[RMDB]
RNA sequence: GGGAACGACUCGAGUAGAGUCGAAAAGGGGUCAAGAGGUGGAGCUGUGAUCAUAGCUUUUGACGGACUGAAGCCUCCACGGUCCGAUAAGCUAUGCGUACAGCGUCGAAGCCUCUUGACGGAGGCACCCAAAGUGUGCGGUUUCGACCGCACACAAUACCAUGCAUUGUUUCGACAAUGCAUGGUAAAAAGAAACAACAACAACAAC
Reactivity to 2A3 in 0.01 (KOAc 150mM, MgCl2 10mM, bicine 150mM(pH8.5), 24C), signal-to-noise 3, nucleotides 027 to 156: g030g000g010g000u010c010a010a000g000a000g000g020u020g010g020a020g000c000u000g000u010g020a030u200c000a010u000a000g020c020u060u230u240u300g130a110c110g000g000a000c000u020g030a060a010g010c000c000u000c000c000a020c020g000g010u000c010c000g060a060u050a180a020g000c010u010a000u000g000c000g070u280a020c020a000g010c020g080u220c000g020a000a000g010c000c000u010c000u000u000g000a000c010g010g000a000g000g000c000a030c000c000c010a010a050a030g000u000g010u000g000c020g020g020u020u080u160c180g100a040c020c010g000c000a000c000a000c000a000a000
Reactivity to DMS in 0.01 (KOAc 150mM, MgCl2 10mM, bicine 150mM(pH8.5), 24C), signal-to-noise 1, nucleotides 027 to 156: g000g020g090g020u010c020a020a030g030a020g020g050u000g000g000a130g080c010u000g010u000g020a090u000c030a020u000a020g050c010u000u000u020u010g010a210c160g040g000a110c000u010g020a040a060g000c020c000u000c000c000a300c030g020g000u000c000c010g010a080u000a070a020g000c020u000a020u020g000c240g000u010a060c010a010g000c000g000u030c110g000a240a300g000c000c000u000c020u000u000g010a000c000g010g020a040g090g060c020a130c010c000c020a060a140a090g000u000g030u000g020c000g000g010u000u000u000c230g010a050c000c010g010c010a000c000a000c000a050a250

Overview:
Structure probing data (2A3 and DMS) for a 207-nucleotide construct. Values cover nucleotides 27 to 156. Source: RMDB library RNAMAK, as collected in RNAgym. As a SHAPE reagent, 2A3 marks flexible, mostly unpaired nucleotides at the ribose 2'-OH.